RNA sequence: GGGAACGACUCGAGUAGAGUCGAAAAGGCAGUGGUCAUUGACCUGUGGUCACGUGCCGUUAUUGGCUGGUCAAUGUCGCCACGCAUGACGGCGCAACUGGCCUGCGAUGCCCUGCAGAUGGCGCUGCCGUAGGCGUCUGUUCGCAGACGCCUACGGAAAAGAAACAACAACAACAAC
Reactivity to DMS in 0.01 (KOAc 150mM, MgCl2 10mM, bicine 150mM(pH8.5), 24C), signal-to-noise 2, nucleotides 027 to 126: g000g010c000a010g020u000g010g000u010c010a010u000u000g020a090c170c150u020g020u010g040g020u000c020a030c240g000u000g010c000c000g000u000u000a050u000u010g000g040c030u010g000g000u010c090a100a120u010g010u000c240g020c000c000a020c210g020c070a060u000g010a050c060g000g030c010g050c040a070a070c150u000g010g000c030c000u010g010c050g010a080u000g000c070c020c050u000g000c040a100g000a070u010g010g000c060g000c040u000g030
Reactivity to 2A3 in 0.01 (KOAc 150mM, MgCl2 10mM, bicine 150mM(pH8.5), 24C), signal-to-noise 2, nucleotides 027 to 126: g060g000c000a000g000u110g100g000u160c020a100u040u050g060a130c020c120u080g050u070g100g000u010c000a000c070g010u010g000c000c000g000u010u000a000u070u120g190g020c040u010g000g020u070c030a050a280u260g110u300c110g000c010c000a020c080g020c020a010u070g010a000c010g000g000c000g000c000a050a160c130u020g000g010c000c000u020g000c000g020a040u060g000c000c040c000u010g000c020a020g030a100u090g050g030c050g000c040u030g030